[RMDB]
RNA sequence: GGGAACGACUCGAGUAGAGUCGAAAAAAAAACGGCGAUCGGGUCUCUCGAGUGUGGAGAGCAUGGGAGUUGGCGGACACAUGAGAGUUCCACCAUGAACCUCGUCCAGCCCACUCUCAUCUCAUCCGCCCGCUCGAGAGGUCGCGAUCGUCAAAAACAUGCUACAAGUGUUCGCACUUGUAGCAUGAAAAGAAACAACAACAACAAC
Reactivity to 2A3 in 0.01 (KOAc 150mM, MgCl2 10mM, bicine 150mM(pH8.5), 24C), signal-to-noise 1, nucleotides 027 to 156: a000a000a000a000a010c020g000g000c000g000a010u010c010g000g000g010u010c000u010c000u000c000g010a020g010u080g010u090g010g010a000g010a000g000c110a000u000g000g010g010a010g000u010u010g000g020c020g010g020a010c050a020c040a220u300g010a030g000a010g000u010u000c040c050a100c070c030a090u230g000a000a000c000c000u000c010g000u000c000c000a030g000c000c010c000a000c000u000c000u000c000a000u000c000u000c000a300u010c000c000g020c000c010c030g030c000u000c000g000a020g000a000g000g000u010c000g000c010g000a000u000c000g010u000c000a000a000a000a000a000